Structure probing data (2A3) for a 177-nucleotide construct. Source: RMDB library OK1LIB, as collected in RNAgym. 2A3 adducts were read by reverse transcription with SuperScript II with manganese.
RNA sequence: GGGAACGACUCGAGUAGAGUCGAAAAGUAGGCGCAUGACCCGUGCCGCGACGACGCAGAGCGAGGCGAUGAGGAGGAGCGGCGCUCAUGACUAGCGUGAUCGGCAAUCUGGCUGGCACAAACCUGGGGCCUGAUGGCUGUUCGCAGCCAUCAGGCCAAAAGAAACAACAACAACAAC
Reactivity to 2A3 in 0.01 (KOAc 150mM, MgCl2 10mM, bicine 150mM(pH8.5), 24C), signal-to-noise 1, nucleotides 027 to 126: g140u110a060g020g050c030g090c140a070u140g000a120c090c000c000g010u060g000c000c000g040c090g000a000c000g000a000c000g040c050a000g000a080g120c010g050a120g070g120c000g000a120u180g060a010g100g030a040g020g010a040g000c030g040g000c000g060c000u020c030a120u020g050a030c000u020a040g050c010g000u060g040a210u000c000g000g050c030a000a030u100c030u050g090g000c010u060g050g000c010a000c120a060a030a120c010c030u030g120g000